Structure probing data (DMS and 2A3) for a 207-nucleotide construct. Conditions: 150 mM KOAc, 10 mM MgCl2 and 150 mM bicine (pH 8.5), 24 C. For DMS, 1,701 sequencing reads were counted. 2A3 adducts were read by reverse transcription with SuperScript II with manganese. It was measured as part of the RMDB library OK3TST. Reactivities are given for positions 27 through 156.
RNA sequence: GGGAACGACUCGAGUAGAGUCGAAAAUGGAUACAUCAGAAAGUGGUGAGUCCGAGAAAGUCCAGGAAGUGGAAACAUGUUAUGAAUCUGAGAGCAUCGAAACAUCUUCACUAAGUAGUGCGCCCACAGAUAGUUCUGGUGCUAGCUUUCACUUCAGCACAAUGUGGGCAUUCGUGCCCACAUUGUGAAAAGAAACAACAACAACAAC
Reactivity to DMS in 0.01 (KOAc 150mM, MgCl2 10mM, bicine 150mM(pH8.5), 24C), signal-to-noise 1, nucleotides 027 to 156: u020g020g030a090u000a070c020a030u040c020a090g050a080a210a170g020u000g010g070u010g000a300g090u000c030c110g000a100g020a130a050a070g050u000c010c030a070g010g040a000a060g060u000g000g010a030a030a070c060a180u000g020u000u000a120u000g070a090a070u000c070u020g000a080g000a080g020c020a030u000c050g020a020a040a070c020a070u000c060u000u030c000a020c060u010a120a070g000u010a080g010u000g000c030g020c060c000c020a130c170a120g010a020u000a030g030u000u010c030u000g010g000u020g020c020u000a050g000c040u010u000u000c040a070c020u000u000c020a120g060
Reactivity to 2A3 in 0.01 (KOAc 150mM, MgCl2 10mM, bicine 150mM(pH8.5), 24C), signal-to-noise 3, nucleotides 027 to 156: u130g020g020a020u030a060c020a000u020c060a030g250a280a260a010g300u030g000g000u000g010a110g010u000c000c020g000a010g080a070a120a000g090u040c030c010a020g060g030a020a000g020u070g020g000a000a000a010c050a010u110g030u180u190a130u170g040a110a110u060c110u130g080a040g020a000g110c010a000u030c010g000a020a020a010c010a010u040c010u190u090c030a010c050u050a150a060g120u160a020g040u280g000c130g150c040c070c020a090c000a000g030a010u080a030g020u020u000c030u110g020g020u020g020c000u010a040g010c000u010u020u040c020a030c000u050u030c010a040g050